[RMDB]
RNA sequence: GGGAACGACUCGAGUAGAGUCGAAAACACUCUAAGUCACCUCAUUAGCAUAAACUCAGAUGUGAGUGAAACAGACUCAUUAUGAAUGAGUGAAGAGACACCUAUCACUGAGGAUAUUCCAAGGGUUUUAGGAGCACUGUGCCAGGAACUGGGGACAAUAAAUACCAGGAUUCGUCCUGGUAUUUAUAAAAGAAACAACAACAACAAC
Reactivity to 2A3 in 0.01 (KOAc 150mM, MgCl2 10mM, bicine 150mM(pH8.5), 24C), signal-to-noise 7, nucleotides 027 to 156: c070a010c020u050c020u060a090a040g050u080c020a060c040c020u060c050a070u090u140a020g040c020a030u090a100a120a020c010u040c040a050g070a210u070g080u020g050a070g020u020g030a060a060a000c050a020g070a050c000u000c010a020u020u180a150u300g180a160a020u010g000a000g010u050g030a080a030g030a010g030a030c020a010c030c010u060a030u150c030a010c060u010g010a020g030g030a030u020a070u180u060c030c030a040a060g040g000g020u020u060u060u100a030g040g010a020g030c020a020c070u050g020u050g050c030c020a020g010g030a070a060c050u050g010g000g040g020a000c030a040
Reactivity to DMS in 0.01 (KOAc 150mM, MgCl2 10mM, bicine 150mM(pH8.5), 24C), signal-to-noise 4, nucleotides 027 to 156: c080a080c050u010c010u010a070a140g020u010c030a100c030c000u000c050a110u000u000a130g030c050a090u000a050a120a130c020u000c020a060g000a120u000g060u000g000a050g020u000g020a100a140a200c100a150g000a090c000u010c010a040u010u010a130u000g030a090a040u000g010a060g030u000g010a130a150g010a100g010a300c020a030c020c020u000a070u010c040a060c060u000g010a140g010g010a120u000a060u000u000c040c010a040a090g020g000g020u000u010u000u000a100g010g000a090g020c040a060c060u000g000u010g020c010c040a080g020g020a040a040c060u000g010g010g030g020a090c060a070